[RMDB]
RNA sequence: GGGAACGACUCGAGUAGAGUCGAAAAGUGGUCGAGUGCGAAGCACUGGGGUAGAGAAAUAAAGAGAGAGAGAGCUACCCCGUCAGUCAGUCACUCUCUGUCUGAAUCUCUCUCUCAAAGACCACGAAGCGGAGUAAUCAUUCGUGAUUACUCCGCUAAAAGAAACAACAACAACAAC
Reactivity to DMS in 0.01 (KOAc 150mM, MgCl2 10mM, bicine 150mM(pH8.5), 24C), signal-to-noise 2, nucleotides 027 to 126: g040u000g000g010u000c000g030a050g030u000g000c020g020a220a110g050c020a000c000u000g000g000g000g060u000a020g000a230g000a070a080a050u060a080a190a070g000a020g030a020g010a000g000a020g000a230g040c020u000a020c100c020c220c080g000u000c040a010g000u000c050a000g000u020c280a140c170u000c130u020c010u000g000u020c000u000g010a050a080u020c050u000c000u000c000u000c000u000c000a010a080a120g000a000c000c000a000c040g020a070
Reactivity to 2A3 in 0.01 (KOAc 150mM, MgCl2 10mM, bicine 150mM(pH8.5), 24C), signal-to-noise 2, nucleotides 027 to 126: g010u010g000g000u000c000g020a020g030u050g040c130g200a190a040g020c000a030c050u040g000g000g000g010u060a060g050a020g080a080a300a080u180a020a190a000g020a020g000a000g010a000g010a000g000a000g000c030u010a010c000c000c010c000g020u000c010a010g010u000c010a000g000u020c090a060c190u070c000u000c000u010g060u010c000u000g040a080a090u000c000u000c000u000c030u000c000u000c000a000a000a000g000a000c000c000a010c010g000a000